[RMDB]
RNA sequence: GGGAACGACUCGAGUAGAGUCGAAAACAAGAUCGGUGGAUAGCAGCCCUAUCAAUAUCUAGGAGAACUGUGCUAUGUUUAGAAGAUUAGGUAGUCUCUAAACAGAACAAUUUACCUUCUGAACAAAAAAAUCCAAUGGCGUUCGCGCCAUUGGAAACUCCGUUAUUAGCUUCGGCUAAUAACGGAGAAAAGAAACAACAACAACAAC
Reactivity to 2A3 in 0.01 (KOAc 150mM, MgCl2 10mM, bicine 150mM(pH8.5), 24C), signal-to-noise 1, nucleotides 027 to 156: c000a000a090g000a090u100c070g000g010u030g050g050a070u070a030g050c020a000g010c020c030c030u020a040u130c020a020a150u050a040u210c100u070a030g010g050a090g020a050a090c020u030g000u040g020c060u050a030u040g000u010u000u000a090g000a300a020g000a030u060u000a030g040g120u100a010g010u020c000u000c000u020a000a000a000c020a020g020a090a010c070a050a060u020u050u070a070c010c000u060u050c040u150g030a050a000c020a040a050a020a010a010a010a020u000c000c000a000a000u020g000g000c000g010u040u050c110g020c010g020c110c000a010u000u020g000g000a020a000a000
Overview
The record gives the reactivity of an RNA of 207 nucleotides to 2A3. As a SHAPE reagent, 2A3 marks flexible, mostly unpaired nucleotides at the ribose 2'-OH. For 2A3 the reverse transcriptase was SuperScript II with manganese. The reactions ran in a buffer of 150 mM KOAc, 10 mM MgCl2 and 150 mM bicine (pH 8.5), at 24 C. The 2A3 profile rests on 494 reads.